[RMDB]
RNA sequence: GGGAACGACUCGAGUAGAGUCGAAAACUAAUUUAUCCACUCCGAUUGCGGCAAAGUUGGUGACGAAAAGUACGUUAACUGGGAAGAACUUUCAUCUACAUGACAUUUGACGUUAUUACUUGCGAAGUUGGCCAAGAUGACAGAGUAGAGAAUGUCACCCGUACUUUUAGUUCGCUAAAAGUACGGGAAAAGAAACAACAACAACAAC
Reactivity to DMS in 0.01 (KOAc 150mM, MgCl2 10mM, bicine 150mM(pH8.5), 24C), signal-to-noise 2, nucleotides 027 to 156: c040u000a060a100u000u010u000a150u010c020c020a070c030u000c020c020g000a130u000u010g020c030g050g030c090a040a040a080g040u020u000g030g000u030g020a140c010g000a050a090a040a100g000u000a020c040g040u000u000a100a100c100u000g010g030g000a100a130g010a060a100c040u020u000u000c020a050u010c020u000a090c080a080u000g030a060c030a110u010u000u030g020a100c060g030u010u000a050u000u010a050c050u000u010g010c050g000a080a190g030u010u000g010g010c080c040a040a120g030a050u000g020a130c010a070g030a100g060u000a070g000a110g020a060a060u020g010u000c070a120
Reactivity to 2A3 in 0.01 (KOAc 150mM, MgCl2 10mM, bicine 150mM(pH8.5), 24C), signal-to-noise 3, nucleotides 027 to 156: c000u010a030a130u140u090u130a110u020c000c010a010c060u000c000c050g100a080u020u160g010c010g040g000c040a060a110a020g010u040u020g040g020u040g010a000c020g040a010a010a010a100g090u050a040c030g020u030u050a130a080c020u060g030g050g000a140a070g040a090a040c040u020u110u100c090a070u000c020u050a010c020a100u050g070a000c010a030u050u080u090g010a020c020g030u050u020a050u050u080a180c010u030u020g020c020g070a090a040g050u060u040g020g010c020c000a010a010g020a040u030g010a010c030a040g010a010g040u090a010g070a020g010a080a060u070g010u000c010a000